[RMDB]
RNA sequence: GGGAACGACUCGAGUAGAGUCGAAAAAGACGGUCUACGGACCGGCAAAACGUUCAUCUCGUUUUACGGGCCGCAUUAAGAUUGAAGCCAAGGAACGGGGACUUCAGACUACGACUACGGUCGUAGAUUACGCCUCCGAGUUUCGACUCGGAGGCAACAGUUAGCAAUCCUUCGGGAUUGCUAACUGAAAAGAAACAACAACAACAAC
Reactivity to 2A3 in 0.01 (KOAc 150mM, MgCl2 10mM, bicine 150mM(pH8.5), 24C), signal-to-noise 2, nucleotides 027 to 156: a000g060a020c000g000g040u000c050u040a080c190g050g000a000c020c030g000g000c010a020a020a000a000c030g030u090u100c070a180u020c050u020c030g000u020u020u000u090a050c030g000g020g020c030c010g000c050a050u140u190a120a020g020a110u040u130g120a080a010g000c030c040a050a060g050g030a020a030c040g010g000g000g040a030c020u090u070c060a100g090a230c000u010a000c000g000a000c000u000a040c190g140g010u000c000g000u000a000g000a000u060u200a070c110g040c000c000u000c000c000g010a020g000u060u060u040c060g040a030c000u000c000g000g000a000g000g000c000a000a000
The record gives the reactivity of an RNA of 207 nucleotides to 2A3. Reactivities are given for positions 27 through 156.